[RMDB]
RNA sequence: GGGAACGACUCGAGUAGAGUCGAAAAUGAAGCAAAUCCAUAAUUGCCAAUGAUGAGCAAUUCGCUAUUGCCGCCUAAAAACGGUUAGCCGGGGCUGCUAGAGCCUUGUUACCAAAGGUAGCCGGCGUUACGGCAUGAUGGUUCGCCAUCAUGCCAAACCACUGCUAUGAUUCGUCAUAGCAGUGGUAAAAGAAACAACAACAACAAC
Reactivity to 2A3 in 0.01 (KOAc 150mM, MgCl2 10mM, bicine 150mM(pH8.5), 24C), signal-to-noise 3, nucleotides 027 to 156: u100g020a070a020g080c060a030a040a100u120c030c020a070u120a100a050u080u000g000c000c010a050a100u260g100a170u080g010a110g050c000a010a030u070u060c040g000c040u050a070u120u180g020c010c000g010c000c010u100a070a060a010a000a000c020g010g000u030u040a050g000c020c010g030g000g030g010c030u060g000c020u090a060g030a000g200c010c000u010u060g050u060u100a080c020c040a130a060a020g000g010u020a010g020c010c000g000g000c040g030u060u180a030c090g000g000c000a000u000g010a000u000g010g050u050u070c160g060c030c000a000u000c000a000u000g010c000c000a000a000
Reactivity to DMS in 0.01 (KOAc 150mM, MgCl2 10mM, bicine 150mM(pH8.5), 24C), signal-to-noise 1, nucleotides 027 to 156: u000g020a080a130g000c020a030a110a100u000c030c040a100u000a030a050u000u000g020c010c020a090a150u010g000a260u000g010a130g020c010a050a040u000u000c000g030c020u000a030u000u000g000c000c010g000c000c030u010a070a070a110a100a070c050g010g010u000u000a040g010c000c070g010g000g040g020c030u000g000c050u000a130g010a140g000c040c010u000u000g020u000u000a070c090c080a100a130a080g050g000u000a040g010c000c160g000g000c060g000u000u000a060c120g010g010c020a030u000g000a040u000g000g020u000u010c300g050c000c000a040u000c000a020u000g060c010c000a020a040

An RNA of 207 nucleotides, treated with 2A3 and DMS and read out base by base. The reactions ran in a buffer of 150 mM KOAc, 10 mM MgCl2 and 150 mM bicine (pH 8.5), at 24 C. For DMS the reverse transcriptase was MarathonRT. For 2A3 the reverse transcriptase was SuperScript II with manganese. The 2A3 profile rests on 2,084 reads.